[RMDB]
RNA sequence: GGGAACGACUCGAGUAGAGUCGAAAAACAAUUAUUUGUCAAGAUUGCAAUGAAACCAUUGAUCAAUUUGAAAAUGAAAAAGUGACAACACUUUAUGGAACAUGUGGUCACUGUCAUUGCUGUGAUGCUGCACUUCACGAUUCGUCGUGAAGUGCAGAAAAGAAACAACAACAACAAC
Reactivity to 2A3 in 0.01 (KOAc 150mM, MgCl2 10mM, bicine 150mM(pH8.5), 24C), signal-to-noise 2, nucleotides 027 to 126: a000c040a050a090u150u030a140u170u200u220g090u090c000a000a020g080a200u000u150g000c000a000a000u010g000a130a010a000c090c000a000u000u000g020a070u070c020a060a010u040u140u220g040a060a060a000a000u020g040a070a020a010a010a010g020u000g010a000c010a190a000c000a080c000u110u050u090a070u200g170g040a070a050c020a110u130g000u000g030g020u000c000a000c060u000g060u050c000a010u000u040g010c060u030g060u050g050a020u060g050
Reactivity to DMS in 0.01 (KOAc 150mM, MgCl2 10mM, bicine 150mM(pH8.5), 24C), signal-to-noise 1, nucleotides 027 to 126: a110c070a010a040u020u010a060u060u010u000g020u010c090a130a030g040a080u020u000g040c000a000a010u010g000a070a130a120c260c000a030u000u010g000a210u040c030a120a130u000u010u020g020a030a030a060a010u000g030a030a100a030a040a000g000u000g000a040c040a010a020c010a020c140u030u030u010a060u060g000g000a070a050c250a050u010g000u000g000g040u010c000a010c000u010g010u000c030a030u000u000g010c010u020g000u020g010a000u000g010